[RMDB]
RNA sequence: GGGAACGACUCGAGUAGAGUCGAAAACGCGCGUUGGCGACCAUGUGGUGGGCGUGCGCCAGGGCAAGAUCCACGCCUAUGCGUUCCACCCAGAAUCUGCUGGUGAGGUUCGGUUACAUCAGGCGUGUGGCUGUACCUUUUUCGAAAGGUACAGCCAAAAAGAAACAACAACAACAAC
Reactivity to DMS in 0.01 (KOAc 150mM, MgCl2 10mM, bicine 150mM(pH8.5), 24C), signal-to-noise 2, nucleotides 027 to 126: c120g000c100g030c050g010u010u000g010g000c020g010a060c140c040a120u000g020u010g030g000u000g020g010g000c050g010u000g000c040g030c010c040a040g010g000g060c060a130a110g000a100u010c040c010a050c030g000c010c010u000a060u000g000c010g010u000u010c000c020a140c040c000c010a080g000a120a100u000c170u000g010c050u010g000g010u000g010a080g010g010u000u010c010g030g000u000u010a210c060a020u000c200a030g010g000c000g000u010g010
Reactivity to 2A3 in 0.01 (KOAc 150mM, MgCl2 10mM, bicine 150mM(pH8.5), 24C), signal-to-noise 2, nucleotides 027 to 126: c030g110c010g000c160g300u060u060g080g000c050g050a090c090c060a050u100g080u110g080g150u050g090g070g000c040g020u080g000c020g000c000c010a040g030g000g000c050a030a010g020a080u120c060c000a010c010g000c000c000u030a010u060g030c000g030u020u010c010c010a090c000c020c000a000g060a030a110u150c080u260g090c000u070g140g090u130g060a030g000g030u020u020c020g020g040u030u170a040c020a030u050c060a010g010g000c000g030u000g050